[RMDB]
This 207-nucleotide RNA was probed chemically with 2A3. For 2A3, 312 sequencing reads were counted. For 2A3 the reverse transcriptase was SuperScript II with manganese. The RNA was probed in 150 mM KOAc, 10 mM MgCl2 and 150 mM bicine (pH 8.5) at 24 C.
RNA sequence: GGGAACGACUCGAGUAGAGUCGAAAAACAUUUUUCAGAAAUGGGUACAAAGAAAAAUGCAUAUUACUGUAUAUUUCAGAGUGUUUAUGUGAACCUUGUAUUUAAUUGAGAGUCCCAUGUACGUUCUGCAGCCUUUUUGCUGCUUCUAUCAUCUGAAUCAGCAUACCGAUUUCGAUCGGUAUGCUGAAAAAGAAACAACAACAACAAC
Reactivity to 2A3 in 0.01 (KOAc 150mM, MgCl2 10mM, bicine 150mM(pH8.5), 24C), signal-to-noise 1, nucleotides 027 to 156: a000c010a000u040u020u000u040u060c070a080g110a050a120a010u100g040g040g000u100a030c070a030a150a100g040a040a070a110a040a010u160g010c020a010u120a050u110u140a060c000u060g030u120a020u060a070u200u280u120c010a020g030a020g110u070g050u110u150u040a100u000g070u040g000a030a060c000c000u000u040g000u020a060u050u090u090a190a250u060u090g020a050g000a000g230u000c000c010c010a000u060g050u010a020c020g060u040u150c000u100g020c020a000g000c000c000u100u260u020u130u300g010c020u020g040c000u020u080c040u060a070u110c010a010u100c020u020g000a010a010